RNA sequence: GGGAACGACUCGAGUAGAGUCGAAAACCGGGCGUGCGGUCCCGCUCCCCGUAAUGUACGGAGGUAGAAGAAAGGGCUCUGGCCCUCUCGGCGUUAUGUCUUCGGUGCUUGCGGCUUCCCGUUCGCGCUAGCGAUUUAGCUUCGGCUAAAUCGCUAGAAAAGAAACAACAACAACAAC
Reactivity to 2A3 in 0.01 (KOAc 150mM, MgCl2 10mM, bicine 150mM(pH8.5), 24C), signal-to-noise 9, nucleotides 027 to 126: c010c000g000g010g000c040g030u110g010c010g010g080u090c000c000c010g020c010u030c010c010c000c000g020u050a090a080u210g060u100a030c020g020g020a060g050g020u130a040g030a200a010g030a040a080a020g020g010g000c020u030c130u240g270g000c040c000c000u010c000u010c000g080g000c070g070u150u110a080u160g050u010c000u010u030c040g100g020u050g020c020u030u040g010c010g010g000c010u030u010c000c000c000g030u070u110c020g000c010g000
Reactivity to DMS in 0.01 (KOAc 150mM, MgCl2 10mM, bicine 150mM(pH8.5), 24C), signal-to-noise 3, nucleotides 027 to 126: c260c000g000g010g010c190g000u000g020c030g000g010u000c020c010c010g020c040u000c090c050c000c020g000u000a040a060u030g020u030a060c030g010g000a050g010g000u000a050g010a150a120g000a020a060a030g000g010g020c010u020c250u050g010g000c000c000c010u000c010u000c010g000g000c120g000u010u000a080u010g010u010c020u000u000c010g040g020u000g000c010u010u000g010c040g000g000c100u000u000c010c000c000g000u000u020c030g000c060g010
Notes:
This 177-nucleotide RNA was probed chemically with 2A3 and DMS. For 2A3 the reverse transcriptase was SuperScript II with manganese. Reactivities are given for positions 27 through 126. DMS adducts were read by reverse transcription with MarathonRT.